[RMDB]
RNA sequence: GGGAACGACUCGAGUAGAGUCGAAAACCGUAGGCAUUCUUACAGCAAGUGAAAUUGGGAGGCUUGGAUUUAUGGAGGAACCGUGGUUUCGAAAGAGACCACUCAGUACUCCAUUGUCAGCCUCAGAUUUCACUUGCUGUAAGAAUGCCUAAACGGACAUUAUGUUCUGGUUCGCCAGAACAUAAUGAAAAGAAACAACAACAACAAC
Reactivity to DMS in 0.01 (KOAc 150mM, MgCl2 10mM, bicine 150mM(pH8.5), 24C), signal-to-noise 1, nucleotides 027 to 156: c010c000g000u000a020g040g000c000a000u010u000c000u000u000a000c010a030g060c000a020a020g010u000g000a000a010a010u010u000g010g050g030a010g000g030c050u010u000g080g010a050u000u000u000a010u000g000g010a060g000g010a130a130c300c300g020u010g000g010u010u000u020c010g000a160a160a300g000a050g010a010c010c000a010c010u000c010a050g000u000a180c000u000c000c010a000u000u010g010u000c000a100g000c000c010u010c000a070g000a000u010u000u000c000a000c000u000u000g010c000u000g000u010a000a010g020a020a000u000g010c010c000u000a000a010a030c030g000g000a270